[RMDB]
Source information: The data come from the RNA Mapping Database (RMDB), library RNAMAK. An RNA of 207 nucleotides, treated with 2A3 and read out base by base. Reactivities are given for positions 27 through 156.

RNA sequence: GGGAACGACUCGAGUAGAGUCGAAAAGGGGUCAGCGGGAGCGAUACGCUAAGCGACGAUCGAUACUGAAGCCUCCACGGUAUCGGGAGCUUAGGUAUCGCAUCGAUCGCUGACGGAGGCACCCAAAGGACAAGCUCAGUUCGCUGAGCUUGUCCAACACUCCAGGAACGUUCGCGUUCCUGGAGUGAAAAGAAACAACAACAACAAC
Reactivity to 2A3 in 0.01 (KOAc 150mM, MgCl2 10mM, bicine 150mM(pH8.5), 24C), signal-to-noise 1, nucleotides 027 to 156: g030g010g100g040u000c000a000g000c000g010g000g010a120g030c000g000a000u000a000c160g060c300u010a010a000g010c010g270a300c010g000a050u000c010g000a000u000a000c000u060g060a090a040g010c010c000u000c000c000a020c000g000g000u010a000u000c010g000g020g010a000g000c000u010u000a010g000g000u000a000u010c020g000c010a020u260c020g030a030u010c000g000c020u010g000a000c010g000g000a000g010g020c000a000c010c000c000a040a100a050g000g000a000c000a000a010g000c000u000c000a010g090u100u270c250g100c180u000g000a000g000c000u030u020g000u040c000c000a000a010

The 2A3 profile rests on 1,248 reads. The RNA was probed in 150 mM KOAc, 10 mM MgCl2 and 150 mM bicine (pH 8.5) at 24 C.